RNA sequence: GGGAACGACUCGAGUAGAGUCGAAAACCAGAUGACGGUCCUGCCAUGAGACCUCAACGAGAGCAUGUCGCAUCGAAUGGACUCGGGGAGUCGGCAGCUUGCCCCACGGAUGAGCGCCUAAUGCCGGAAGAGACGUGCAACUUCGGUUGCACGUCAACUCGUAUUCAGGUUUCGACCUGAAUACGAGAAAAGAAACAACAACAACAAC
Reactivity to 2A3 in 0.01 (KOAc 150mM, MgCl2 10mM, bicine 150mM(pH8.5), 24C), signal-to-noise 1, nucleotides 027 to 156: c030c000a050g040a130u180g030a070c010g000g060u000c000c000u020g040c030c030a100u080g030a020g030a140c010c000u000c030a110a100c110g040a030g000a010g250c010a100u140g060u180c070g000c070a030u060c070g030a010a020u080g000g070a030c030u000c030g000g000g000g000a060g050u040c000g000g000c010a000g010c020u100u140g050c030c000c000c040a050c060g020g060a110u130g050a020g030c030g000c040c000u050a090a030u110g030c010c000g020g060a050a000g110a030g000a060c000g000u020g030c000a000a000c020u130u110c130g110g000u000u000g000c020a010c000g020u010c010a000a000